[RMDB]
An RNA of 177 nucleotides, treated with 2A3 and DMS and read out base by base. For DMS the reverse transcriptase was MarathonRT. Conditions: 150 mM KOAc, 10 mM MgCl2 and 150 mM bicine (pH 8.5), 24 C.
RNA sequence: GGGAACGACUCGAGUAGAGUCGAAAAGAUAUGGACAGGCUCGAUAAGUCUGCAGUCGGAAACGACUGAAAGACUUUUGACGAGCCGUCCUAAGUCAAACAACCCUCUUCUUCGGAAGAGGGUUGAACCAACUAGAUAAGUUCGCUUAUCUAGUUGGAAAAGAAACAACAACAACAAC
Reactivity to 2A3 in 0.01 (KOAc 150mM, MgCl2 10mM, bicine 150mM(pH8.5), 24C), signal-to-noise 4, nucleotides 027 to 126: g000a010u070a020u080g010g000a040c190a190g080g010c010u000c010g040a070u040a270a050g010u000c010u030g030c000a010g000u000c000g020g000a060a040a030c010g000a000c010u010g030a050a070a000g000a000c000u120u110u140u190g170a090c010g000a000g000c000c000g000u000c000c000u000a050a010g050u000c020a060a080a140c000a030a000c000c000c000u000c010u000u000c010u030u080c250g160g000a000a000g000a000g010g000g000u000u000g000a000a000
Reactivity to DMS in 0.01 (KOAc 150mM, MgCl2 10mM, bicine 150mM(pH8.5), 24C), signal-to-noise 7, nucleotides 027 to 126: g010a050u010a280u010g010g000a030c010a130g050g000c000u000c000g010a130u000a020a030g020u000c000u000g000c000a010g010u000c000g000g000a110a070a150c000g000a010c000u010g010a040a080a010g000a020c000u000u000u000u010g010a180c060g000a010g000c000c000g000u000c000c000u000a020a060g000u000c030a120a110a290c010a000a010c000c000c000u000c000u000u000c000u000u010c210g000g010a010a000g000a010g000g000g000u000u000g000a020a170